An RNA of 177 nucleotides, treated with DMS and 2A3 and read out base by base. Conditions: 150 mM KOAc, 10 mM MgCl2 and 150 mM bicine (pH 8.5), 24 C. For 2A3 the reverse transcriptase was SuperScript II with manganese.
RNA sequence: GGGAACGACUCGAGUAGAGUCGAAAAAACGCCUCUAAGUCAGAAUCCGUGCUAGAUACAAUGACCUUGUCCCGCGCAUUUACCGUUGUGUCGAAAUAAGGCGUAAGCCUGUGAACCAUUAUAAGCGCACCCCAGUUGCAUUCGUGCAACUGGGGUGAAAAGAAACAACAACAACAAC
Reactivity to DMS in 0.01 (KOAc 150mM, MgCl2 10mM, bicine 150mM(pH8.5), 24C), signal-to-noise 1, nucleotides 027 to 126: a100a070c190g000c050c000u000c020u000a110a070g030u000c070a000g000a280a080u000c060c030g050u020g000c030u000a050g000a030u010a150c130a100a000u030g000a040c160c000u050u000g000u000c070c030c000g030c060g010c010a090u000u000u000a020c090c030g000u010u020g020u010g040u000c050g030a020a080a050u020a040a000g000g000c060g000u020a200a230g000c000c040u000g010u020g010a140a140c090c000a060u000u040a060u000a080a150g000c020g060
Reactivity to 2A3 in 0.01 (KOAc 150mM, MgCl2 10mM, bicine 150mM(pH8.5), 24C), signal-to-noise 1, nucleotides 027 to 126: a050a000c000g100c000c000u000c070u000a170a210g000u000c050a050g170a080a060u000c000c000g000u000g000c000u260a120g000a020u010a100c000a100a100u130g100a220c000c020u070u070g070u140c050c000c000g010c000g000c150a150u030u080u280a140c000c000g000u000u030g030u030g000u030c000g000a030a120a300u020a280a000g000g020c000g050u050a000a030g000c000c000u000g050u090g030a140a000c030c040a030u040u040a000u300a280a000g020c000g000